[RMDB]
RNA sequence: GGGAACGACUCGAGUAGAGUCGAAAAAUGGACCUGAGCUCCCUAAUUGUAGACACAGUUAAGCUGGAACAGUUCUACACAUCCAUCUCUGAGGUCUGCGCGAGAAUUCAAGAAGAGUCCAAUGCAUUAGAGCGCUUGGGAGAGUCUCCUAGAGCAGAAUCUACCCCAGAUUCGUCUGGGGUAGAUUAAAAGAAACAACAACAACAAC
Reactivity to 2A3 in 0.01 (KOAc 150mM, MgCl2 10mM, bicine 150mM(pH8.5), 24C), signal-to-noise 1, nucleotides 027 to 156: a010u040g000g000a030c030c000u010g050a080g020c010u050c000c000c000u040a110a080u070u020g010u020a000g040a000c000a020c000a030g000u120u210a050a010g000c020u000g000g030a080a010c010a070g100u110u040c100u140a040c080a000c010a120u050c020c000a050u000c000u010c020u050g040a080g100g000u070c080u030g000c020g000c020g020a020g060a020a030u230u150c020a080a000g060a050a000g050a140g050u040c020c070a000a020u050g000c000a050u110u130a030g060a030g070c050g080c060u070u060g060g040g000a030g030a060g010u020c000u000c120c050u130a040g000a000g080c000a000g010

Chemical mapping of a 207-nucleotide RNA with 2A3. Reactivities are given for positions 27 through 156. 2A3 adducts were read by reverse transcription with SuperScript II with manganese. The reactions ran in a buffer of 150 mM KOAc, 10 mM MgCl2 and 150 mM bicine (pH 8.5), at 24 C.